Chemical mapping of a 170-nucleotide RNA with DMS and 2A3. DMS adducts were read by reverse transcription with MarathonRT. The reactions ran in a buffer of 150 mM KOAc, 10 mM MgCl2 and 150 mM bicine (pH 8.5), at 24 C. Values are in units of 0.01, from 0 to 300, in steps of 10.
RNA sequence: GGGAACGACUCGAGUAGAGUCGAAAAUUUUAGUCGUCGUUAAUUCCCAAGAUGUCUAUAAGAGUCUUACCAUAGUUGACAUUCCACAGAGUUUGACUUUUUCAUAUGAUGGGUUACGUGGCGCAAUUACGAAGUAUGUUCGCAUACUUCAAAAGAAACAACAACAACAAC
Reactivity to DMS in 0.01 (KOAc 150mM, MgCl2 10mM, bicine 150mM(pH8.5), 24C), signal-to-noise 9, nucleotides 027 to 129: u040u040u040u050a030g010u000c030g020u000c030g010u000u000a070a150u020u050c000c000c000a130a110g000a090u020g010u020c050u040a070u000a050a120g020a010g020u020c000u010u010a080c000c020a090u020a100g030u030u010g020a120c150a050u000u010c040c010a030c060a050g040a130g020u000u000u000g030a060c060u000u000u010u000u010c110a070u030a040u020g030a090u000g000g000g000u010u010a030c110g030u010g010g010c120g030c070a100a060u030u020a070c230
Reactivity to 2A3 in 0.01 (KOAc 150mM, MgCl2 10mM, bicine 150mM(pH8.5), 24C), signal-to-noise 9, nucleotides 027 to 129: u050u050u040u080a070g030u070c030g000u000c010g020u020u080a080a060u160u150c010c000c010a010a010g080a050u180g060u030c050u070a080u010a130a050g010a000g000u000c020u010u020a020c020c020a100u080a060g050u020u090g060a060c070a150u160u070c050c010a080c040a050g090a030g080u020u030u020g010a010c000u030u030u010u050u070c090a080u080a060u170g110a080u050g030g020g010u040u050a040c040g020u040g000g000c010g000c040a010a070u130u060a070c110